An RNA of 177 nucleotides, treated with DMS and 2A3 and read out base by base. The 2A3 profile rests on 2,247 reads. The reactions ran in a buffer of 150 mM KOAc, 10 mM MgCl2 and 150 mM bicine (pH 8.5), at 24 C. High 2A3 reactivity points to a flexible backbone, as in loops and unpaired stretches. For DMS the reverse transcriptase was MarathonRT.
RNA sequence: GGGAACGACUCGAGUAGAGUCGAAAAAGGAGGACACGGACGACAAACCGUAGGUACUCUUGCCCUUUAUUGUUGGGUGCACCCUGGGACCCAGUAAUACCCGGGGGGAGGCGGGGUUAACCCAUACGAUAUGGUAACUGUUCGCAGUUACCAUAUCAAAAGAAACAACAACAACAAC
Reactivity to DMS in 0.01 (KOAc 150mM, MgCl2 10mM, bicine 150mM(pH8.5), 24C), signal-to-noise 4, nucleotides 027 to 126: a050g000g000a020g000g020a250c100a010c010g000g000a080c090g010a210c300a110a170a050c000c000g020u000a070g010g030u000a120c010u000c010u000u010g000c000c010c020u020u000u010a080u030u010g010u020u010g010g000g010u000g010c150a120c010c000c020u000g020g000g000a080c030c010c010a090g020u000a020a030u000a110c020c010c010g010g000g020g010g000g010a060g020g020c080g000g000g010g000u010u000a100a140c040c020c030a050u010a030c170
Reactivity to 2A3 in 0.01 (KOAc 150mM, MgCl2 10mM, bicine 150mM(pH8.5), 24C), signal-to-noise 3, nucleotides 027 to 126: a000g020g010a000g000g010a000c000a000c000g020g070a050c080g030a050c130a010a090a020c000c000g020u060a100g060g060u070a020c010u000c030u010u040g030c010c000c000u020u230u040a230u050u220g160u050u060g010g000g010u030g010c030a080c010c010c010u010g000g020g030a020c010c000c030a010g040u030a010a040u090a220c010c020c050g000g030g000g040g010g000a050g020g070c060g000g000g000g000u040u070a050a060c020c000c000a020u070a060c070